[RMDB]
RNA sequence: GGGAACGACUCGAGUAGAGUCGAAAACUGAUCUGUCCUUGGGUCAGGCGGAGGAAGCAACUCCCGUAAGGGAGCCAUCGCCUAAAGGGGCAACCCUUGAACCGCAGCAGUGUUAUUCACAAGGAAUCGGUCUGCGCUGGGGUCACACGGUUCAGGCGCAGUAUAAUAAGUUCGCUUAUUAUACUGCAAAAGAAACAACAACAACAAC
Reactivity to 2A3 in 0.01 (KOAc 150mM, MgCl2 10mM, bicine 150mM(pH8.5), 24C), signal-to-noise 4, nucleotides 027 to 156: c010u000g000a010u010c000u020g010u020c000c010u010u020g000g000g010u020c030a010g030g020c010g010g010a020g000g010a000a010g010c010a010a070c000u000c030c000c000g070u170a100a170g000g000g000a000g000c010c000a020u010c000g000c000c000u010a010a010a010g010g000g010g010c020a040a120c000c000c000u000u010g010a020a010c000c030g000c010a010g020c040a040g020u090g100u210u220a180u170u180c090a020c000a070a020g030g010a030a030u130c100g030g040u010c010u030g030c030g000c040u040g010g000g040g090u060c050a030c010a010c130g050g000u040u030c010a010g020g010c040
Reactivity to DMS in 0.01 (KOAc 150mM, MgCl2 10mM, bicine 150mM(pH8.5), 24C), signal-to-noise 2, nucleotides 027 to 156: c000u010g010a010u000c010u000g020u010c020c040u040u000g000g030g020u000c030a040g000g000c060g050g030a080g010g080a190a160g010c020a060a070c010u000c020c000c010g000u020a150a120g000g060g020a050g010c020c050a070u000c180g000c030c030u010a080a070a040g010g010g010g040c190a050a170c000c020c020u010u020g020a050a100c010c010g020c060a170g000c040a160g000u000g020u020u010a090u010u000c060a110c030a080a060g020g000a040a060u010c040g020g010u000c020u010g020c080g020c050u000g020g020g010g020u000c060a060c040a030c110g010g010u010u010c000a120g000g030c160

This 207-nucleotide RNA was probed chemically with 2A3 and DMS. For DMS the reverse transcriptase was MarathonRT. Values cover nucleotides 27 to 156. The data come from the RNA Mapping Database (RMDB), library ARCHII. 2A3 adducts were read by reverse transcription with SuperScript II with manganese.